[RMDB]
RNA sequence: GGGAACGACUCGAGUAGAGUCGAAAACUUGUGGUUGGCGGCGCGCCUACCGUAGGUGGCGAGGUGAUGCUGUACAUCGGAGGUGAGCGGGUAAGCGUCGGUGUCACGACUGCCGACACCUCGGCCACGAUUGCAACCAAGUUGAACGCCGCCAUCAACGUAUGUCCUAAUUCGUUAGGACAUACGUAAAAGAAACAACAACAACAAC
Reactivity to 2A3 in 0.01 (KOAc 150mM, MgCl2 10mM, bicine 150mM(pH8.5), 24C), signal-to-noise 4, nucleotides 027 to 156: c050u100u110g060u080g150g060u040u040g010g010c010g010g000c030g000c020g010c050c030u090a120c040c020g080u080a090g050g060u020g030g000c020g040a020g020g040u090g020a130u100g030c050u030g030u100a040c020a090u040c040g050g000a090g060g020u030g030a120g120c060g000g000g080u150a190a040g080c050g040u010c030g000g010u110g090u070c070a050c180g060a040c040u110g020c010c000g010a020c000a000c000c000u000c000g050g010c010c010a020c010g060a100u060u080g020c010a010a030c030c010a080a030g040u080u090g100a040a010c010g000c000c000g010c000c020a010u010c010a010
Reactivity to DMS in 0.01 (KOAc 150mM, MgCl2 10mM, bicine 150mM(pH8.5), 24C), signal-to-noise 2, nucleotides 027 to 156: c080u000u010g020u000g020g000u000u000g000g010c020g020g010c010g000c030g010c020c010u000a010c020c050g020u000a060g000g040u010g010g030c000g010a100g040g030u000g000a090u020g040c010u010g040u010a160c140a080u000c030g020g010a120g090g010u000g010a100g020c030g040g060g030u000a080a050g020c060g030u000c030g020g000u000g020u010c150a130c040g010a010c010u010g050c010c020g010a200c200a060c080c000u000c010g010g000c000c020a180c010g020a060u000u010g050c020a070a090c050c070a070a300g000u000u000g000a090a130c040g010c000c000g010c000c010a020u000c020a150